RNA sequence: GGGAACGACUCGAGUAGAGUCGAAAAUUUUUCACUCUAUGGCAAAUUAGCCAUUUCAAACAUUAUCAUGGCUGAUAUUUUCCGUAGUCAGGUUUAAUGUUUUAAAAGUGCUGUGGGAAAGUGAACAGUAAAUGAUUAUGUUCGCAUAAUCAUUUACAAAAGAAACAACAACAACAAC
Reactivity to 2A3 in 0.01 (KOAc 150mM, MgCl2 10mM, bicine 150mM(pH8.5), 24C), signal-to-noise 5, nucleotides 027 to 126: u040u020u000u020u010c010a010c010u010c010u030a020u010g010g000c010a040a070a300u120u060a200g020c000c010a020u020u050u030c030a010a020a010c010a020u010u030a020u050c040a040u010g010g000c010u020g060a030u030a220u220u200u130u070c060c070g020u010a010g010u000c010a000g020g020u010u050u070a010a010u030g020u000u020u010u050a050a080a010a020g080u040g020c020u010g020u030g010g010g050a070a130a100g030u040g030a050a010c020a050
Reactivity to DMS in 0.01 (KOAc 150mM, MgCl2 10mM, bicine 150mM(pH8.5), 24C), signal-to-noise 9, nucleotides 027 to 126: u000u000u010u010u000c010a030c020u000c040u000a050u000g010g010c030a080a120a140u010u010a110g020c080c040a090u000u000u000c180a040a020a030c020a020u000u000a010u000c060a060u000g000g000c000u000g010a080u010a080u000u010u000u010c200c260g010u010a020g010u000c010a030g000g010u010u000u000a010a010u000g000u000u010u000u010a020a050a070a120g020u000g010c070u000g020u000g010g010g010a050a040a040g010u000g000a060a080c300a090
This 177-nucleotide RNA was probed chemically with 2A3 and DMS. The 2A3 profile rests on 9,196 reads. For 2A3 the reverse transcriptase was SuperScript II with manganese. The RNA was probed in 150 mM KOAc, 10 mM MgCl2 and 150 mM bicine (pH 8.5) at 24 C. It was measured as part of the RMDB library OK2TRN.